[RMDB]
RNA sequence: GGGAACGACUCGAGUAGAGUCGAAAAUGCGAACGGACUGAAGUGAGGGAGGCAGGGGUCCUCUCUAAGAGAAAGGUGGACCAGAUGACAAGAAAGCCCACCCACAGGAGGGCUUAUCCAUUCAGUCAUAAACCGUAGGGUUCGCCCUACGGUUUAUAAAAGAAACAACAACAACAAC
Reactivity to 2A3 in 0.01 (KOAc 150mM, MgCl2 10mM, bicine 150mM(pH8.5), 24C), signal-to-noise 1, nucleotides 027 to 126: u130g020c050g040a040a020c030g000g050a020c020u020g020a050a040g090u050g110a080g060g000g010a030g030g000c090a040g050g000g010g090u050c000c000u000c010u000c000u030a120a120g060a010g050a080a090a010g020g010u040g030g000a030c040c010a010g050a130u070g000a050c040a050a060g060a100a040a000g000c000c010c000a030c040c030c000a120c020a070g000g040a020g040g000g000c000u080u020a070u000c020c010a000u030u060c010a010g010u020c010
Reactivity to DMS in 0.01 (KOAc 150mM, MgCl2 10mM, bicine 150mM(pH8.5), 24C), signal-to-noise 5, nucleotides 027 to 126: u000g030c060g000a050a080c110g010g010a070c020u000g020a060a070g020u000g020a110g020g000g010a110g030g000c060a090g010g010g000g000u010c000c010u000c020u010c030u000a060a110g010a140g000a070a100a070g010g020u000g010g020a050c020c030a090g000a130u010g010a100c150a070a080g000a080a080a030g000c000c000c000a130c030c010c260a110c290a150g010g010a060g020g000g000c010u000u010a030u010c010c040a160u000u010c050a040g000u010c040